[RMDB]
Source: RMDB library 15KLIB, as collected in RNAgym. The record gives the reactivity of an RNA of 170 nucleotides to DMS and 2A3. DMS adducts were read by reverse transcription with MarathonRT.
RNA sequence: GGGAACGACUCGAGUAGAGUCGAAAAGCCUCCUCGCUGGCGCCGGCUGGGCAACAUUCCGAGGGGACCGUCCCUCGGUAAUGGCGAAUGGGACCCAGAACUCUCUCUAGAUUCCCAGAGAGAAUCGAACCUGGUGACUUCGGUCACCAGAAAAGAAACAACAACAACAAC
Reactivity to DMS in 0.01 (KOAc 150mM, MgCl2 10mM, bicine 150mM(pH8.5), 24C), signal-to-noise 4, nucleotides 027 to 129: g030c000c000u030c050c030u030c030g070c090u040g030g040c000g020c080c030g000g000c040u020g000g000g030c060a110a130c000a090u000u000c020c030g000a050g010g020g010g050a050c140c250g100u030c050c000c030u030c100g010g030u060a000a000u050g000g030c140g030a070a130u020g020g010g030a170c000c000c000a030g010a090a170c140u020c010u020c010u010c000u000a130g000a190u000u100c010c050c000a000g040a000g030a090g050a080a100u060c030g030a090a170c140
Reactivity to 2A3 in 0.01 (KOAc 150mM, MgCl2 10mM, bicine 150mM(pH8.5), 24C), signal-to-noise 4, nucleotides 027 to 129: g010c000c000u000c020c010u010c020g060c050u020g010g000c050g000c000c020g050g010c020u090g020g010g000c030a070a030c050a060u000u000c010c010g010a000g010g030g000g030a050c000c070g260u200c000c000c000u030c000g000g010u050a020a040u000g000g030c000g020a070a040u110g000g010g050a030c000c000c000a040g000a050a040c010u000c010u000c000u000c010u000a050g020a300u050u000c000c000c000a010g000a060g020a000g000a020a060u080c040g030a020a010c020